Notes: Chemical mapping of a 177-nucleotide RNA with DMS.
[RMDB]
RNA sequence: GGGAACGACUCGAGUAGAGUCGAAAAAGGACAGAAGGGGUCUCGGCCUUCUUCGGCGUCACUGUCCAAGGUCAGGAAGCAUGCCAGCCUGGGCUCCUCCAGCCAAGGCUGAUUGUGGGGCCGCAUAUAAGACUGCGUUAUUCGUAACGCAGUCUUAAAAAGAAACAACAACAACAAC
Reactivity to DMS in 0.01 (KOAc 150mM, MgCl2 10mM, bicine 150mM(pH8.5), 24C), signal-to-noise 2, nucleotides 027 to 126: a080g000g030a050c030a080g020a040a040g010g020g020g000u000c000u020c270g000g020c010c000u000u000c020u000u000c040g010g010c180g030u000c040a070c030u000g000u010c020c010a050a040g030g020u000c020a110g040g010a160a230g000c060a050u010g030c160c020a020g010c020c000u000g030g010g010c010u000c080c070u010c140c120a130g020c000c000a060a040g010g000c010u000g000a040u010u000g030u000g000g000g000g000c020c010g040c180a070u000a120
The reactions ran in a buffer of 150 mM KOAc, 10 mM MgCl2 and 150 mM bicine (pH 8.5), at 24 C.